The record gives the reactivity of an RNA of 177 nucleotides to DMS and 2A3. For 2A3 the reverse transcriptase was SuperScript II with manganese. DMS adducts were read by reverse transcription with MarathonRT. The DMS profile rests on 4,073 reads. Conditions: 150 mM KOAc, 10 mM MgCl2 and 150 mM bicine (pH 8.5), 24 C. Source: RMDB library TTRDES, as collected in RNAgym.
RNA sequence: GGGAACGACUCGAGUAGAGUCGAAAAGAUAUGGAUCCGUGUAGACAUGCGUCCCACCGGUCGGAAACGACCGUUGGGACGCAACAGCUAUGCGGAUCCUAAGUCAAAAGUGUCGUUCGCGACACAAGAAUAUUCCAUGGUUCGCCAUGGAAUAUUCAAAAGAAACAACAACAACAAC
Reactivity to DMS in 0.01 (KOAc 150mM, MgCl2 10mM, bicine 150mM(pH8.5), 24C), signal-to-noise 3, nucleotides 027 to 126: g020a060u000a300u010g000g000a010u000c000c000g020u010g010u000a010g000a090c090a120u000g020c010g030u020c000c010c000a000c020c000g000g030u000c000g010g000a090a150a250c020g020a020c000c000g030u000u000g000g010g020a000c000g010c000a000a010c250a180g000c000u010a010u010g010c000g000g000a000u000c010c000u000a000a080g010u000c060a100a110a110a090g010u000g010u000c000g030u000u000c210g010c020g020a020c010a000c010a060a150
Reactivity to 2A3 in 0.01 (KOAc 150mM, MgCl2 10mM, bicine 150mM(pH8.5), 24C), signal-to-noise 1, nucleotides 027 to 126: g010a010u060a030u190g000g020a000u010c010c000g000u010g020u010a040g050a120c070a120u110g010c020g040u000c040c040c010a010c020c030g060g020u010c020g080g000a170a070a050c070g000a020c000c020g010u010u010g000g070g030a000c080g020c000a000a000c000a000g000c000u000a000u020g010c000g020g000a000u010c000c000u010a010a010g000u000c000a000a010a110a290g000u000g010u000c010g010u070u150c300g000c020g110a010c000a000c010a010a050